The data come from the RNA Mapping Database (RMDB), library VIROID. Chemical mapping of a 177-nucleotide RNA with DMS and 2A3. Values are in units of 0.01, from 0 to 300, in steps of 10. DMS adducts were read by reverse transcription with MarathonRT.
RNA sequence: GGGAACGACUCGAGUAGAGUCGAAAACUGGGGCUUAGGACCCCACUCCUGCGAGACGGGAGUAAUCCUAAACAGGGUUUUCACCCUUCCUUUAGUUUCCUUCCUCUCCUGGAGAGGUCUUCUGCCCGUAUAUAUCUUUCUUCGGAAAGAUAUAUACAAAAGAAACAACAACAACAAC
Reactivity to DMS in 0.01 (KOAc 150mM, MgCl2 10mM, bicine 150mM(pH8.5), 24C), signal-to-noise 5, nucleotides 027 to 126: c030u000g010g010g010g010c020u010u000a020g000g010a020c010c000c060c280a030c010u000c000c000u000g000c180g000a030g010a030c210g020g000g010a010g010u000a050a030u000c270c020u000a000a010a020c170a010g010g000g010u000u000u010u010c240a090c000c000c000u000u000c030c020u000u000u000a010g000u010u000u000c140c010u000u000c010c010u000c000u000c000c020u000g000g000a020g010a100g010g000u000c000u000u000c050u000g000c020c010c020
Reactivity to 2A3 in 0.01 (KOAc 150mM, MgCl2 10mM, bicine 150mM(pH8.5), 24C), signal-to-noise 5, nucleotides 027 to 126: c010u030g010g000g000g000c000u020u040a000g020g010a010c020c000c010c010a040c000u000c000c000u020g020c180g030a010g000a010c170g000g010g000a000g010u010a000a020u060c020c020u000a010a000a050c300a040g050g020g030u130u190u300u300c140a050c000c000c000u000u030c010c000u000u010u010a010g010u010u010u020c010c000u000u030c000c000u000c000u000c010c010u010g000g000a000g000a010g000g000u000c000u020u000c000u020g010c000c000c000
For 2A3 the reverse transcriptase was SuperScript II with manganese.